[RMDB]
RNA sequence: GGGAACGACUCGAGUAGAGUCGAAAAUGGUGUUAAGUGGAAUAAGUGGAAAAAUAUACAUAUAUGUACAGGGGGCUACAUAUAUGUAUAUGCCCCCUCGAGAAAGUAUAAGUAGGUAUAAGGUGGACGGAUAUCCCAUAUUCGUAUGGGAUAUCCGAAAAGAAACAACAACAACAAC
Reactivity to 2A3 in 0.01 (KOAc 150mM, MgCl2 10mM, bicine 150mM(pH8.5), 24C), signal-to-noise 1, nucleotides 027 to 126: u020g020g040u050g010u150u170a170a070g020u090g060g010a090a030u110a040a090g060u170g010g070a040a070a050a080a000u080a020u040a000c030a000u070a000u030a010u160g010u020a000c070a050g000g000g000g090g030c020u000a000c000a010u050a000u020a000u040g020u010a010u000a000u000g000c030c020c000c030c000u000c010g030a060g020a020a040a020g050u060a030u040a110a090g060u080a020g020g050u050a060u000a220a000g050g030u110g020g000a100
Reactivity to DMS in 0.01 (KOAc 150mM, MgCl2 10mM, bicine 150mM(pH8.5), 24C), signal-to-noise 1, nucleotides 027 to 126: u010g000g010u010g060u000u020a060a040g020u000g000g010a050a050u000a080a110g020u000g000g040a010a100a110a040a050u000a020u000a010c000a020u010a000u000a050u000g000u010a040c050a090g030g010g030g000g020c090u000a000c020a040u000a020u010a020u010g000u000a000u050a020u040g000c140c000c040c020c000u000c050g010a050g030a070a050a070g030u020a020u030a050a160g030u000a060g000g000u030a020u020a020a100g000g000u000g000g000a220

This 177-nucleotide RNA was probed chemically with 2A3 and DMS. 2A3 adducts were read by reverse transcription with SuperScript II with manganese. DMS adducts were read by reverse transcription with MarathonRT. 2A3 is a SHAPE reagent: it acylates the 2'-hydroxyl of flexible nucleotides of all four kinds. The DMS profile rests on 2,031 reads. Conditions: 150 mM KOAc, 10 mM MgCl2 and 150 mM bicine (pH 8.5), 24 C. The 2A3 profile rests on 558 reads. Values cover nucleotides 27 to 126.